[RMDB]
An RNA of 177 nucleotides, treated with 2A3 and DMS and read out base by base. For DMS the reverse transcriptase was MarathonRT. It was measured as part of the RMDB library OK1LIB. For DMS, 5,145 sequencing reads were counted.
RNA sequence: GGGAACGACUCGAGUAGAGUCGAAAACGCCGGGCCCGCGGCCUGCUAUGUGUUGGGGCGGUCGUCGCUCAACGCCCGCGGCCUCCUGGUCGUUCCUACGCGCUGGCUCCCCGGGCACGUAUGUGCGUCACCUUCCCAUUUUCGAAUGGGAAGGUGAAAAAGAAACAACAACAACAAC
Reactivity to 2A3 in 0.01 (KOAc 150mM, MgCl2 10mM, bicine 150mM(pH8.5), 24C), signal-to-noise 5, nucleotides 027 to 126: c040g020c030c020g010g020g000c000c010c010g020c010g000g010c000c020u110g040c040u080a110u300g100u030g040u060u070g030g030g000g040c010g040g030u200c080g070u090c010g040c030u060c040a030a030c050g010c000c000c000g010c000g010g000c010c010u020c010c010u030g000g010u040c000g010u020u010c000c000u020a050c030g010c000g000c020u040g040g000c010u040c010c000c000c010g030g060g000c020a010c030g110u220a100u300g030u040g010c010g030
Reactivity to DMS in 0.01 (KOAc 150mM, MgCl2 10mM, bicine 150mM(pH8.5), 24C), signal-to-noise 2, nucleotides 027 to 126: c100g010c020c030g000g000g000c300c020c050g000c030g000g000c080c020u020g020c070u000a050u010g000u000g000u000u000g000g000g000g000c010g010g020u030c120g020u010c030g040c050u000c050a060a040c060g010c040c050c090g040c010g020g000c080c060u040c040c030u000g000g000u010c010g000u000u000c010c000u010a100c070g010c050g000c020u000g000g010c020u010c050c020c000c060g000g000g000c000a020c010g000u050a020u030g010u000g000c030g010

The 2A3 profile rests on 5,535 reads. The reactions ran in a buffer of 150 mM KOAc, 10 mM MgCl2 and 150 mM bicine (pH 8.5), at 24 C.